This 177-nucleotide RNA was probed chemically with DMS and 2A3. Conditions: 150 mM KOAc, 10 mM MgCl2 and 150 mM bicine (pH 8.5), 24 C. In probing experiments dimethyl sulfate is read out at A N1 and C N3, which are open when not base-paired. 2A3 adducts were read by reverse transcription with SuperScript II with manganese.
[RMDB]
RNA sequence: GGGAACGACUCGAGUAGAGUCGAAAAGAUAUGGAUCAUGGACAUGCUCGAAGGGUCGGAAACGACCUCAAGAGCAACAGCCCGCUGAUCCUAAGUCAAAAGUAGGAUUCCUUCGGGAAUCCUACAACAUAGUUUACAGGUUCGCCUGUAAACUAUGAAAAGAAACAACAACAACAAC
Reactivity to DMS in 0.01 (KOAc 150mM, MgCl2 10mM, bicine 150mM(pH8.5), 24C), signal-to-noise 8, nucleotides 027 to 126: g000a040u010a300u010g000g010a010u000c000a040u010g010g010a020c030a240u000g000c000u010c000g000a300a190g000g000g010u010c000g000g010a070a080a190c000g010a010c000c000u000c010a010a300g000a020g010c000a010a030c190a110g010c000c000c000g000c250u000g000a010u000c000c010u000a050a100g000u010c030a070a070a110a090g010u000a010g000g000a020u000u000c000c000u000u020c220g040g010g000a010a000u000c000c000u000a000c000a050a140
Reactivity to 2A3 in 0.01 (KOAc 150mM, MgCl2 10mM, bicine 150mM(pH8.5), 24C), signal-to-noise 3, nucleotides 027 to 126: g030a010u070a030u140g000g000a000u010c010a020u140g010g010a050c050a100u150g000c000u010c020g080a130a040g030g000g000u000c010g000g000a060a060a020c020g000a000c000c010u010c010a020a010g000a000g050c000a010a010c010a000g010c000c000c000g000c030u020g000a000u000c010c000u010a160a020g070u040c040a020a020a060a160g010u000a000g010g000a000u000u000c000c000u030u100c300g050g000g000a000a000u000c000c000u000a000c000a000a000